[RMDB]
RNA sequence: GGGAACGACUCGAGUAGAGUCGAAAAGAUAUGGAAUGGUUACAUAGCAACAGCUCGGAAACGAGACAUGCUAGUAACAUUCCUAAGUCAAAACAAGUUAUAGUACCUUCGGGUACUAUAACUUGAACCAUUGUAAAGGCUUCGGCCUUUACAAUGGAAAAGAAACAACAACAACAAC
Reactivity to 2A3 in 0.01 (KOAc 150mM, MgCl2 10mM, bicine 150mM(pH8.5), 24C), signal-to-noise 3, nucleotides 027 to 126: g010a020u060a030u130g010g020a020a000u050g160g010u070u000a020c050a260u030a300g000c000a020a130c070a170g030c000u010c000g040g000a050a050a050c010g000a000g010a050c020a060u050g000c000u000a000g000u000a010a000c000a000u010u030c000c000u000a160a020g070u050c040a030a020a050a150c010a010a020g000u000u000a010u000a000g000u000a010c000c000u020u090c300g030g000g000u000a000c000u000a000u000a000a000c000u000u000g000a000a000
Reactivity to DMS in 0.01 (KOAc 150mM, MgCl2 10mM, bicine 150mM(pH8.5), 24C), signal-to-noise 3, nucleotides 027 to 126: g020a020u000a300u000g000g000a000a000u000g020g010u010u000a000c020a110u000a020g020c010a060a050c250a140g000c000u000c000g030g010a080a090a180c000g000a020g000a030c070a150u000g000c000u000a000g010u000a000a010c000a020u000u000c000c000u000a030a080g000u000c030a060a070a070a180c010a000a000g000u010u000a000u000a000g010u000a000c000c000u000u010c220g040g020g010u000a000c000u000a000u000a010a020c000u000u000g000a030a150